[RMDB]
Annotation:
Chemical mapping of a 177-nucleotide RNA with DMS and 2A3. The 2A3 profile rests on 4,993 reads. It was measured as part of the RMDB library TTRDEL. For DMS the reverse transcriptase was MarathonRT. The reactions ran in a buffer of 150 mM KOAc, 10 mM MgCl2 and 150 mM bicine (pH 8.5), at 24 C. Reactivities are given for positions 27 through 126. 2A3 adducts were read by reverse transcription with SuperScript II with manganese.
RNA sequence: GGGAACGACUCGAGUAGAGUCGAAAAGAUAUGGAUCAUGCACGGGAUUCUAGGCGUUGAAAUCGGAAACGAUGGAGCCUUCUAUCUCAUCAUGUGAUCCUAAGUCAAACGCGUGUUCGCACGCGAAUCAUUAAAAAGACUUCGGUCUUUUUAAUGAAAAAGAAACAACAACAACAAC
Reactivity to DMS in 0.01 (KOAc 150mM, MgCl2 10mM, bicine 150mM(pH8.5), 24C), signal-to-noise 4, nucleotides 027 to 126: g010a050u000a300u010g000g000a010u010c010a020u000g030c300a160c270g000g000g000a010u010u000c040u000a010g020g020c000g010u000u000g000a090a110a020u000c010g000g000a130a070a140c010g000a010u000g000g000a150g020c000c000u010u010c030u000a010u000c000u010c000a050u010c130a050u020g010u010g000a010u000c000c000u000a030a130g000u010c020a050a110a190c010g010c010g020u000g010u000u000c160g030c010a000c010g010c010g010a070a080
Reactivity to 2A3 in 0.01 (KOAc 150mM, MgCl2 10mM, bicine 150mM(pH8.5), 24C), signal-to-noise 2, nucleotides 027 to 126: g030a030u060a010u160g000g010a000u020c000a000u050g030c050a010c130g020g000g000a020u040u070c040u100a020g020g000c000g070u190u060g020a020a020a010u010c000g020g060a110a020a020c030g000a010u010g000g030a000g000c010c000u000u000c010u010a010u000c000u000c010a080u040c030a040u250g000u020g040a000u000c000c010u000a110a030g080u050c050a080a040a160c020g000c010g010u010g040u070u110c300g000c160a000c000g010c000g010a010a080